[RMDB]
RNA sequence: GGGAACGACUCGAGUAGAGUCGAAAAAUGGCGUGCUCGCACUACGACAACCUGGUGCUACGCAACCUGUACGACCGCAUCACCCUGUACUGCGAAAACAACGUGAAAAUGGUGGAUCGCAUCCAACUAGCGCUGGCAGACAUGAUGCGGGAGUGCGCCUCUGCGUGCAUUUCGAUGCACGCAGAGGAAAAGAAACAACAACAACAAC
Reactivity to 2A3 in 0.01 (KOAc 150mM, MgCl2 10mM, bicine 150mM(pH8.5), 24C), signal-to-noise 1, nucleotides 027 to 156: a030u100g070g000c030g020u060g080c110u060c130g110c000a020c000u030a000c050g220a050c110a100a140c060c090u200g000g000u000g030c000u060a060c090g000c020a050a080c010c000u020g010u040a000c000g040a000c020c000g000c000a000u010c000a020c000c140c050u000g000u170a300c010u000g040c030g110a030a070a300a000c080a020a010c040g070u160g110a070a130a040a040u080g010g010u040g000g030a080u040c150g040c090a070u080c100c000a010a050c030u060a010g060c000g000c050u040g110g010c000a030g010a010c010a010u190g000a000u000g000c000g000g030g010a000g000u000g000c000g020